[RMDB]
RNA sequence: GGGAACGACUCGAGUAGAGUCGAAAAGCUUGGUGCUGGUCGGGAACCAUUACAUCCACAGUUUCCGUAGAAACUUUCCCUUAGUAAAUUGGACCCCGUCUUGCAUCAAUCGAAUCAGAGGUCGCGGUCCGUCCCAUAUGUUCGCAUAUGGGACGGAAAAAGAAACAACAACAACAAC
Reactivity to DMS in 0.01 (KOAc 150mM, MgCl2 10mM, bicine 150mM(pH8.5), 24C), signal-to-noise 2, nucleotides 027 to 126: g000c150u000u000g000g030u020g000c010u000g000g050u000c020g010g000g010a030a210c000c000a040u030u030a010c010a170u000c100c040a070c160a030g000u000u000u000c010c300g000u010a090g000a040a010a080c030u000u010u000c020c020c030u020u000a150g030u020a040a050a100u040u000g010g030a240c220c000c020c000g000u000c040u000u000g000c090a040u000c010a020a000u020c030g000a100a080u000c130a050g050a050g000g010u000c010g000c070g000g000
Reactivity to 2A3 in 0.01 (KOAc 150mM, MgCl2 10mM, bicine 150mM(pH8.5), 24C), signal-to-noise 3, nucleotides 027 to 126: g030c030u010u010g000g010u000g000c000u010g030g000u010c010g010g010g010a040a020c000c000a010u020u030a030c040a080u100c080c060a050c030a110g000u010u030u050c010c110g030u070a120g040a000a040a020c010u090u070u090c040c060c010u000u020a060g000u030a060a150a190u130u070g000g030a060c020c000c000c000g000u000c000u000u060g000c000a000u030c000a000a020u040c040g030a000a030u060c030a060g040a050g090g010u020c030g000c040g050g020